Annotation: This 207-nucleotide RNA was probed chemically with 2A3 and DMS. The RNA was probed in 150 mM KOAc, 10 mM MgCl2 and 150 mM bicine (pH 8.5) at 24 C.
[RMDB]
RNA sequence: GGGAACGACUCGAGUAGAGUCGAAAAGUACCUGUGCGGCGACGUCCUCGACGCACUCACCCGCCGGCCACGCGCACGCACCCGCGCACUCCGUUCGGCACCCAUGACAACCAACAGAUGACACACCGUACCCGGGUGCUUGACAAACGCGGACACCACCAUGUUCCUUAUUCGUAAGGAACAUGGUAAAAGAAACAACAACAACAAC
Reactivity to 2A3 in 0.01 (KOAc 150mM, MgCl2 10mM, bicine 150mM(pH8.5), 24C), signal-to-noise 5, nucleotides 027 to 156: g050u070a090c020c040u040g020u010g000c030g020g010c010g030a090c100g130u110c020c040u010c020g030a020c000g010c020a010c010u070c030a110c000c020c010g020c030c010g030g000c030c010a090c090g020c010g000c010a050c060g030c010a040c010c000c010g000c000g000c030a070c060u060c030c060g030u040u070c010g010g000c020a020c010c010c000a080u140g030a070c060a090a050c080c060a060a070c040a120g090a110u160g060a090c020a020c030a050c140c100g080u170a110c020c010c030g000g000g000u000g000c010u010u090g000a000c020a010a070a010c020g000c020g030g010a010c030a030c070c000
Reactivity to DMS in 0.01 (KOAc 150mM, MgCl2 10mM, bicine 150mM(pH8.5), 24C), signal-to-noise 2, nucleotides 027 to 156: g020u010a100c050c000u010g010u000g050c030g030g020c020g070a050c050g000u020c070c040u000c010g030a020c030g030c020a070c040u000c050a100c110c050c000g040c090c010g030g000c000c030a110c030g000c040g060c060a140c030g030c050a060c040c000c020g010c060g030c050a090c060u000c070c110g010u020u000c100g010g010c020a060c000c040c000a140u010g000a090c030a130a140c050c010a120a130c070a170g000a110u000g000a130c060a080c040a120c040c030g010u000a120c080c020c040g000g000g040u000g010c020u010u020g030a070c040a060a070a080c020g050c020g000g030a100c040a080c030c040
The 2A3 profile rests on 4,681 reads. For DMS, 3,038 sequencing reads were counted.